[RMDB]
RNA sequence: GGGAACGACUCGAGUAGAGUCGAAAAUUUAGCAACAAUGUUUUACAUUGUUGGUUAAUCCAUUCUGUCGCCGUGUUAGUCGCAGGGUGUAUAGGCACAGGUCAGACCAUAUAAAAACCCAAAUUAACGGGUUAUAGAAUUUCGAUUCUAUAACCCGAAAAGAAACAACAACAACAAC
Reactivity to 2A3 in 0.01 (KOAc 150mM, MgCl2 10mM, bicine 150mM(pH8.5), 24C), signal-to-noise 1, nucleotides 027 to 126: u030u040u020a040g060c010a000a000c000a000a020u010g000u040u300u110u120a080c000a030u010u000g000u020u010g030g010u000u010a000a030u000c020c000a080u100u060c040u100g100u130c040g000c020c020g090u000g030u160u110a030g060u050c030g000c090a040g000g050g000u020g030u020a050u010a100g030g060c010a010c020a110g000g010u010c000a000g040a120c030c020a040u160a000u050a130a060a030a100a030c000c010c050a060a050a000u030u010a060a020
Reactivity to DMS in 0.01 (KOAc 150mM, MgCl2 10mM, bicine 150mM(pH8.5), 24C), signal-to-noise 1, nucleotides 027 to 126: u010u000u000a050g010c030a020a010c000a000a000u000g000u020u000u020u020a060c010a010u000u000g000u000u000g000g010u030u010a040a040u020c070c020a130u000u010c060u000g000u000c050g010c020c030g000u000g010u010u020a070g000u000c090g000c030a060g020g030g020u000g000u010a060u000a070g000g020c080a060c060a070g010g010u000c090a060g020a150c040c020a030u010a090u000a060a100a070a110a080c000c000c010a040a080a140u000u000a090a180